[RMDB]
RNA sequence: GGGAACGACUCGAGUAGAGUCGAAAAACUAAUUGCUGCCUACACAUAGAUAACCAAGGGCAAGUAGUUGAAGACAUAGUUAGAGAUAUGACAAAAGUGGCACAUGUGCCCGUGCAAGUGUGGCAUGCGCAGAAGUACAUUUCGAUGUACUUCUGCGAAAAGAAACAACAACAACAAC
Reactivity to DMS in 0.01 (KOAc 150mM, MgCl2 10mM, bicine 150mM(pH8.5), 24C), signal-to-noise 3, nucleotides 027 to 126: a090c060u010a070a100u000u000g020c030u000g020c060c010u000a050c100a040c100a110u000a090g000a110u000a060a120c180c150a080a120g000g020g010c000a020a020g000u000a040g000u000u000g010a110a160g010a070c050a070u000a050g000u010u000a090g020a140g010a120u000a030u000g020a080c080a040a060a100a090g000u020g020g010c010a010c060a080u000g010u000g020c000c020c020g010u010g000c070a050a070g030u000g020u010g010g010c020a040u020g030
Reactivity to 2A3 in 0.01 (KOAc 150mM, MgCl2 10mM, bicine 150mM(pH8.5), 24C), signal-to-noise 2, nucleotides 027 to 126: a000c040u060a070a050u030u070g000c010u020g050c010c030u240a060c080a000c010a070u230a040g140a090u070a080a010c020c040a020a060g040g000g000c000a030a060g000u030a030g000u010u060g090a100a020g040a020c020a030u090a030g050u070u090a040g070a020g010a170u030a050u230g020a030c040a000a070a010a060g060u100g060g000c000a030c000a100u150g020u000g040c000c010c010g000u040g010c040a040a080g060u060g030u030g090g000c000a010u020g040